Chemical mapping of a 170-nucleotide RNA with 2A3 and DMS. The 2A3 profile rests on 7,442 reads.
[RMDB]
RNA sequence: GGGAACGACUCGAGUAGAGUCGAAAACAUUGAACUCGAAAAUAAAUUCACACCUUUGAGUGUGGAGUCUACACCAGUUGAACCUCCAACUGUAGAUGUGGUAGCACUUCAACAGGAAAUGACAAUUAGCCAGCGGUGUUCGCACCGCUGAAAAGAAACAACAACAACAAC
Reactivity to 2A3 in 0.01 (KOAc 150mM, MgCl2 10mM, bicine 150mM(pH8.5), 24C), signal-to-noise 5, nucleotides 027 to 129: c060a040u040u210g080a040a030c060u020c100g130a060a010a010a040u200a010a030a020u130u050c010a020c000a030c010c000u130u080u190g060a090g020u020g000u000g000g020a000g030u000c000u000a010c000a030c030c000a000g000u000u010g010a030a040c070c030u000c030c000a020a010c000u000g050u120a070g020a170u080g000u000g040g030u030a010g090c010a020c010u090u120c010a050a030c020a020g000g000a020a060a050u080g050a000c040a030a100u100u050a040g090c050
Reactivity to DMS in 0.01 (KOAc 150mM, MgCl2 10mM, bicine 150mM(pH8.5), 24C), signal-to-noise 2, nucleotides 027 to 129: c170a200u100u050g010a050a080c000u020c090g060a090a140a020a030u050a030a150a130u070u020c010a030c060a020c020c000u020u070u030g060a000g040u060g000u000g000g000a040g020u080c040u030a050c000a130c080c030a050g020u050u000g010a020a050c000c000u000c110c020a130a060c040u000g030u020a100g070a140u050g010u000g040g010u000a090g020c060a030c040u060u040c010a010a100c000a070g000g000a050a060a090u040g020a010c130a000a000u000u050a000g030c080